[RMDB]
RNA sequence: GGGAACGACUCGAGUAGAGUCGAAAAGGAAAUAAAGAGAUAGAAAAUGUCAGUACUGUAUAGGUUUCAGGGACAAUGAAUUAUCAAUACAAUGAUAUAUUGCCUGAAUUUCAGCAUAUCUUAGUAACUGCCUUAAAGUUACAGAAGGACUGAGAUAGUCGCAGGGUAGUUUCGACUACCCUGCGACAAAAGAAACAACAACAACAAC
Reactivity to 2A3 in 0.01 (KOAc 150mM, MgCl2 10mM, bicine 150mM(pH8.5), 24C), signal-to-noise 1, nucleotides 027 to 156: g040g000a090a000a040u070a060a180a050g030a000g070a060u170a190g040a120a100a010a000u110g040u070c000a030g000u040a030c070u030g100u140a080u070a180g040g040u060u060u000c010a060g030g070g000a090c030a010a010u030g050a000a110u270u000a110u020c000a040a010u240a100c010a070a030u030g000a000u000a000u000a000u040u040g000c010c000u040g080a070a020u000u070u170c060a030g060c000a020u040a030u050c000u000u000a000g000u000a030a060c040u060g120c000c000u100u020a090a280a000g000u000u000a030c000a000g030a010a010g100g040a030c010u000g010a000g000a060u130a100